[RMDB]
RNA sequence: GGGAACGACUCGAGUAGAGUCGAAAAUCUCCUCUUUUGAGGAGACCUGGUGAGAGCGCUAGGAAGGGCUUUUAACGUUGCAUUGCCCCUAUACACCUUUUAACUGGUGUAUAGUUAACCUCGUGGGCCAAUUUAAGUUUGCGUAGGAAGCAACGAAGGUAUGGGGCGAGUUCGCUCGCUUUAUGUCAAAAGAAACAACAACAACAAC
Reactivity to DMS in 0.01 (KOAc 150mM, MgCl2 10mM, bicine 150mM(pH8.5), 24C), signal-to-noise 5, nucleotides 027 to 156: u010c010u000c000c000u000c010u000u000u010u000g010a020g020g010a020g010a010c020c040u010g020g030u000g000a100g020a100g010c030g030c040u000a070g010g010a140a090g000g010g000c020u000u000u000u010a050a140c060g020u000u000g020c020a180u000u010g010c010c030c050c010u000a010u000a010c000a010c000c000u000u000u000u000a100a290c300u000g020g030u000g010u000a000u000a010g010u000u000a070a150c020c010u000c030g010u000g010g080g000c010c030a050a120u010u000u000a080a070g010u010u000u000g010c010g000u010a070g020g010a130a140g010c020a020a040c020g000a080a110

The record gives the reactivity of an RNA of 207 nucleotides to DMS. The reactions ran in a buffer of 150 mM KOAc, 10 mM MgCl2 and 150 mM bicine (pH 8.5), at 24 C. Values cover nucleotides 27 to 156. For DMS the reverse transcriptase was MarathonRT. Reactivities are rounded to 0.1 and cut off at 0 and 3.